This 207-nucleotide RNA was probed chemically with 2A3 and DMS. The DMS profile rests on 19,224 reads. In probing experiments dimethyl sulfate is read out at A N1 and C N3, which are open when not base-paired. For 2A3 the reverse transcriptase was SuperScript II with manganese. High 2A3 reactivity points to a flexible backbone, as in loops and unpaired stretches. The reactions ran in a buffer of 150 mM KOAc, 10 mM MgCl2 and 150 mM bicine (pH 8.5), at 24 C.

[RMDB]
RNA sequence: GGGAACGACUCGAGUAGAGUCGAAAAGUUAACUUUCUGUCUCGUUGAUCUGUCUAAUGUUGACAGUGGGGUGUUAAAGUCUCCCAUUAUUAUUGUGUGGGAGUCUAAGUCUCUUUGUGGGUCACUAAGGACUUGCUUUAUGAAUCUGGGUGCUCCACUAUACGUAAUGAUUCGUCAUUACGUAUAGAAAAGAAACAACAACAACAAC
Reactivity to 2A3 in 0.01 (KOAc 150mM, MgCl2 10mM, bicine 150mM(pH8.5), 24C), signal-to-noise 7, nucleotides 027 to 156: g040u070u070a090a100c020u050u100u040c050u060g090u020c040u020c060g060u050u070g020a130u050c060u060g070u020c020u150a140a110u170g090u190u070g060a010c000a010g010u040g000g010g000g000u050g020u090u160a110a140a040g010u000c000u000c000c010c020a000u040u090a040u090u060a090u110u160g120u010g000u000g020g000g000a000g000u000c020u020a040a020g020u000c020u000c000u180u040u030g030u040g020g090g060u120c040a020c060u040a040a070g040g000a010c000u020u030g020c020u090u160u080a120u160g090a090a070u060c050u060g030g040g030u060g010c010u030c000c010a010
Reactivity to DMS in 0.01 (KOAc 150mM, MgCl2 10mM, bicine 150mM(pH8.5), 24C), signal-to-noise 4, nucleotides 027 to 156: g010u000u000a030a040c030u000u000u000c020u000g010u000c010u000c020g030u000u010g010a080u010c060u040g020u000c050u000a050a050u000g010u000u000g000a030c020a040g040u000g020g020g030g000u000g020u000u000a050a070a110g010u000c010u000c000c010c010a070u000u000a090u000u010a130u010u010g030u000g040u000g010g000g000a040g010u000c030u000a030a130g010u000c020u000c040u000u000u000g040u010g000g030g010u000c030a090c060u020a090a180g020g000a040c030u000u000g030c100u000u000u000a110u020g010a080a050u000c020u000g010g020g020u000g010c020u000c060c030a300